[RMDB]
RNA sequence: GGGAACGACUCGAGUAGAGUCGAAAAUCGACGGUAAAUGGAAUCCCAUACUCCCAACAUGUGUACGAUCUAACGAAGAAUUUGAUCCAGUGGAUGAUGGUCCCGACGAUGAGACAGAUCUGAGCAAACUCUCGAAAGACGUUGUACAAUAUGAACAAGUAUCUUUGUUGUUCGCAACAAAGAUACUAAAAGAAACAACAACAACAAC
Reactivity to 2A3 in 0.01 (KOAc 150mM, MgCl2 10mM, bicine 150mM(pH8.5), 24C), signal-to-noise 5, nucleotides 027 to 156: u070c020g060a050c070g020g060u140a050a100a090u160g070g020a030a110u070c030c000c010a020u040a030c050u060c000c020c030a080a050c060a140u110g030u020g030u110a020c040g020a060u010c020u030a070a070c030g070a070a090g040a120a150u080u050u090g030a040u030c030c020a020g020u040g070g040a060u080g030a020u050g080g020u040c010c000c020g050a050c030g030a050u080g030a030g010a040c000a020g060a060u040c030u050g010a010g030c010a060a040a050c000u050c010u010c030g050a060a060a000g030a040c070g010u010u010g000u020a030c020a070a070u100a060u220g050a070a030c030a100
Reactivity to DMS in 0.01 (KOAc 150mM, MgCl2 10mM, bicine 150mM(pH8.5), 24C), signal-to-noise 3, nucleotides 027 to 156: u000c060g030a140c090g000g020u000a060a090a120u010g000g010a130a130u010c030c010c020a090u000a160c070u010c000c020c010a100a120c090a080u000g030u020g030u000a070c020g000a070u000c020u000a060a300c050g020a080a110g000a100a080u010u000u010g020a050u000c020c010a110g010u000g010g010a090u010g000a070u000g040g040u000c000c000c000g010a100c100g010a110u000g010a060g010a030c050a050g010a080u000c020u000g020a120g020c010a040a050a050c060u000c010u010c030g020a130a110a110g020a070c130g030u020u000g010u000a040c050a060a050u000a120u000g000a060a110c070a120